An RNA of 177 nucleotides, treated with DMS and 2A3 and read out base by base. For 2A3, 2,719 sequencing reads were counted. 2A3 adducts were read by reverse transcription with SuperScript II with manganese. The RNA was probed in 150 mM KOAc, 10 mM MgCl2 and 150 mM bicine (pH 8.5) at 24 C. The DMS profile rests on 2,514 reads. DMS adducts were read by reverse transcription with MarathonRT.
[RMDB]
RNA sequence: GGGAACGACUCGAGUAGAGUCGAAAAGUGGUUAUUGCCUGAAUCCAUUAUUGAUGGCUAUAUCCGCAGUGAUGAUUCCUCUAUUCGUCAGGUCGGUGCUGGAGGACAACUCACCUACAAUCAGGCAGCUAUUACCCCAGUUCGCUGGGGUAAUAGCAAAAGAAACAACAACAACAAC
Reactivity to DMS in 0.01 (KOAc 150mM, MgCl2 10mM, bicine 150mM(pH8.5), 24C), signal-to-noise 3, nucleotides 027 to 126: g040u010g000g010u000u010a040u000u000g020c020c000u000g000a140a090u000c090c110a060u000u010a120u020u020g010a120u000g000g010c110u000a050u000a040u000c020c030g030c030a110g030u010g000a050u000g010a300u000u000c020c010u000c030u000a060u020u000c040g010u000c120a090g010g020u010c060g000g020u000g020c190u000g000g030a040g010g000a040c010a020a070c100u000c030a060c030c050u000a070c170a060a080u010c060a020g010g020c090a100
Reactivity to 2A3 in 0.01 (KOAc 150mM, MgCl2 10mM, bicine 150mM(pH8.5), 24C), signal-to-noise 3, nucleotides 027 to 126: g010u010g000g000u020u040a060u050u110g000c000c000u000g020a020a040u070c040c070a090u110u170a120u200u300g080a050u040g010g000c010u020a010u010a010u100c020c040g000c040a030g030u040g060a080u050g030a040u060u090c010c000u050c010u060a100u110u120c050g040u050c080a040g190g100u120c040g010g020u080g040c000u020g020g010a020g010g010a050c000a020a060c050u010c030a020c010c020u050a040c070a080a090u060c040a010g060g000c010a010